[RMDB]
RNA sequence: GGGAACGACUCGAGUAGAGUCGAAAACGGAUUGCACAAGGGACUUAAUAUCCCUUCUAACUCUGCUUUGUUAAACAUGUUAGUUUGUUUGACAUCAUUAUGGAUAUGGAUCAGUCUAAAAACUAAACCAUCAAAAUGGAUUCGUCCAUUUUGAUGGAAAAGAAACAACAACAACAAC
Reactivity to DMS in 0.01 (KOAc 150mM, MgCl2 10mM, bicine 150mM(pH8.5), 24C), signal-to-noise 5, nucleotides 027 to 126: c080g010g010a040u000u010g000c150a100c260a030a000g000g000g000a020c060u000u020a140a130u000a300u000c010c000c010u000u000c050u000a130a120c160u010c040u000g000c110u000u000u000g020u000u000a020a030a040c020a020u000g010u010u010a030g000u000u000u000g010u000u010u000g000a020c010a040u010c070a050u000u000a300u020g010g000a060u000a060u000g010g000a080u000c060a070g010u000c040u010a050a040a020a030a030c040u000a010a030a140
Reactivity to 2A3 in 0.01 (KOAc 150mM, MgCl2 10mM, bicine 150mM(pH8.5), 24C), signal-to-noise 5, nucleotides 027 to 126: c020g020g020a040u020u110g040c060a050c030a110a020g000g000g000a000c010u090u130a080a040u060a090u250c000c000c000u000u000c020u020a050a040c030u010c020u050g070c070u080u060u080g020u040u070a020a040a000c010a020u050g030u070u030a090g070u030u030u040g030u020u030u010g000a000c010a020u040c010a010u010u190a110u300g120g020a050u030a050u200g080g020a060u100c020a020g060u000c050u070a080a090a020a000a020c000u030a040a030a050

An RNA of 177 nucleotides, treated with DMS and 2A3 and read out base by base. For DMS the reverse transcriptase was MarathonRT. Reactivities are rounded to 0.1 and cut off at 0 and 3. It was measured as part of the RMDB library OK2TST.